[RMDB]
RNA sequence: GGGAACGACUCGAGUAGAGUCGAAAACAUGGUAUGGCCUCGCAUCCGGCCUACCGACAGAAUCAACAACUUCGGAUGCGGUGGGCGAGAGCCCUAAGAAGGAGUCUCCUCGCCUGGGGAGCUCCGUAUGACUUAAUGUAUUACCAGGCGAAUACAAAAUGGUACUCCUAUUCGUAGGAGUACCAUUAAAAGAAACAACAACAACAAC
Reactivity to 2A3 in 0.01 (KOAc 150mM, MgCl2 10mM, bicine 150mM(pH8.5), 24C), signal-to-noise 2, nucleotides 027 to 156: c080a120u070g000g000u140a170u270g000g000c010c020u030c010g000c000a000u000c000c000g000g010c030c000u010a010c000c010g040a000c040a060g220a050a180u250c060a000a140c020a070a090c110u170u110c060g000g000a000u000g000c000g000g030u070g000g010g000c000g000a060g000a010g060c000c000c010u000a000a050g120a030a050g000g000a010g010u130c020u010c030c000u010c000g010c000c010u000g000g000g000g000a000g010c000u000c010c000g020u050a080u020g020a030c020u030u150a140a090u240g120u130a080u080u210a120c000c000a010g000g000c040g000a020a060u300a030c050a000a060
Reactivity to DMS in 0.01 (KOAc 150mM, MgCl2 10mM, bicine 150mM(pH8.5), 24C), signal-to-noise 1, nucleotides 027 to 156: c050a220u000g020g030u000a000u020g010g010c000c000u000c000g060c070a040u000c010c030g010g010c000c010u000a010c000c000g000a300c080a100g010a080a150u030c070a080a140c110a070a060c170u000u020c020g040g060a020u000g000c010g020g000u010g020g000g070c000g000a240g000a270g020c000c000c010u010a000a100g010a230a210g020g000a080g000u010c000u000c000c010u000c000g020c070c050u000g000g000g000g000a100g010c010u000c000c000g000u000a010u000g010a140c140u010u000a130a160u030g020u010a110u010u020a130c020c000a100g050g000c040g030a180a040u000a090c060a100a150